[RMDB]
Source: RMDB library M2PK90, as collected in RNAgym. Structure probing data (2A3 and DMS) for a 177-nucleotide construct.
RNA sequence: GGGAACGACUCGAGUAGAGUCGAAAACAGUUAUGUGCGUCCCUCCCGAAGCUGCGCGCUCGGUCGAAGAGGACGAGCAUCGCCGAUAGAGGACGACCGGUCUUCGGUCAAGGGAAUAAGAGUAAAACAGCUGCAUUGUAUUCGUACAAUGCAGCUGAAAAGAAACAACAACAACAAC
Reactivity to 2A3 in 0.01 (KOAc 150mM, MgCl2 10mM, bicine 150mM(pH8.5), 24C), signal-to-noise 1, nucleotides 027 to 126: c030a010g050u180u110a090u140g050u090g050c020g010u030c010c000c000u020c000c000c000g020a120a040g020c050u080g040c000g010c020g000c140u010c050g050g000u070c050g000a060a040g040a130g120g000a000c000g000a010g000c000a040u040c010g000c010c020g040a000u010a130g170a090g080g000a030c080g020a000c030c000g000g070u160c100u260u230c020g000g030u010c040a020a070g080g030g010a020a020u120a120a040g090a040g070u100a080a080a000a000
Reactivity to DMS in 0.01 (KOAc 150mM, MgCl2 10mM, bicine 150mM(pH8.5), 24C), signal-to-noise 2, nucleotides 027 to 126: c060a080g000u020u000a030u000g000u010g010c090g020u000c000c010c020u000c040c000c010g010a070a120g020c000u020g020c110g000c300g000c020u000c010g000g000u000c090g000a110a060g010a130g000g000a020c000g000a030g010c010a120u000c030g020c020c060g000a110u000a120g010a160g000g010a050c120g000a090c090c040g000g010u000c100u000u010c040g030g000u000c080a090a080g010g000g010a060a070u010a000a080g010a140g000u010a080a030a090a150
Annotation: The 2A3 profile rests on 1,224 reads. For DMS, 1,420 sequencing reads were counted. Values cover nucleotides 27 to 126.